[RMDB]
RNA sequence: GGGAACGACUCGAGUAGAGUCGAAAAGCAUCGCGGUCUCGAUGAUCGUCAUCACGUCGACGGCGUCCUGCGGCGCGACGGGGAACGGCGCCCCAUCGUGAAUCGACGCCGCGAGCGCACGAUAGAAGCCUGGUAAUGCGUUCGCGCAUUACCAGGCAAAAGAAACAACAACAACAAC
Reactivity to DMS in 0.01 (KOAc 150mM, MgCl2 10mM, bicine 150mM(pH8.5), 24C), signal-to-noise 1, nucleotides 027 to 126: g000c070a100u000c010g010c040g010g070u010c280u000c000g000a050u010g010a170u020c040g070u010c090a110u020c050a060c020g060u000c040g000a080c060g000g010c020g000u000c060c130u000g030c100g010g040c010g000c000g000a060c010g000g010g030g020a060a100c160g020g030c140g000c030c010c000c030a050u020c020g070u020g010a140a070u000c020g000a070c220g000c030c010g000c000g000a000g010c080g010c010a040c040g000a080u000a160g000a120a090
Reactivity to 2A3 in 0.01 (KOAc 150mM, MgCl2 10mM, bicine 150mM(pH8.5), 24C), signal-to-noise 2, nucleotides 027 to 126: g000c060a090u110c050g000c010g020g060u000c040u000c050g060a040u020g010a050u030c050g040u020c060a100u110c020a020c050g030u020c010g080a300c050g110g040c010g020u050c020c060u300g030c120g040g020c000g040c040g010a030c010g000g000g000g000a110a080c090g020g000c020g010c010c030c020c010a120u120c000g050u010g040a040a060u010c020g010a000c010g010c000c010g020c010g000a000g000c070g000c020a080c070g080a040u100a130g170a190a010